This 207-nucleotide RNA was probed chemically with DMS and 2A3. Reactivities are given for positions 27 through 156. For 2A3, 5,898 sequencing reads were counted. High DMS reactivity at an A or C suggests that its Watson-Crick edge is free.

RNA sequence: GGGAACGACUCGAGUAGAGUCGAAAAGGGGUCUUAGCGUUUGACGCGACCAGGAGCAACAGCUAUACUGAAGCCUCCACGGUAUAGACAUGCUCCGGUCGCCGAGCUAAGACGGAGGCACCCAAAACGAUUUUGUAGGUUCGCCUACAAAAUCGAAGAAGUAACAAUACUUCGGUAUUGUUACUUCAAAAGAAACAACAACAACAAC
Reactivity to DMS in 0.01 (KOAc 150mM, MgCl2 10mM, bicine 150mM(pH8.5), 24C), signal-to-noise 1, nucleotides 027 to 156: g000g000g060g000u010c020u000u010a040g010c000g000u000u010u000g010a100c110g000c020g020a040c010c030a130g060g020a050g060c010a110a170c170a130g000c000u000a020u010a070c000u010g020a070a130g000c000c010u000c000c050a300c000g010g010u010a020u010a020g010a020c080a150u000g000c000u000c000c000g000g000u000c000g000c030c010g000a280g010c000u000a070a050g000a030c000g030g050a020g100g020c030a120c030c010c010a040a070a070a230c020g010a030u000u000u000u000g000u000a000g020g030u000u020c300g030c000c020u000a000c000a000a000a010a000u020c000g000a030a150
Reactivity to 2A3 in 0.01 (KOAc 150mM, MgCl2 10mM, bicine 150mM(pH8.5), 24C), signal-to-noise 4, nucleotides 027 to 156: g020g010g010g020u010c010u010u010a000g000c000g070u090u200u300g050a040c020g000c010g000a000c050c070a200g020g000a010g000c080a050a150c070a220g000c000u000a000u000a000c010u020g040a170a020g020c000c000u000c000c000a010c000g000g010u000a010u000a000g080a150c090a200u300g010c000u000c000c000g000g000u000c000g000c000c000g020a010g000c000u000a000a000g000a000c010g000g000a000g000g000c010a040c000c000c010a020a060a000a060c000g000a000u000u000u020u000g010u000a010g000g060u020u030c300g050c080c000u000a010c010a000a000a000a000u000c000g000a040a040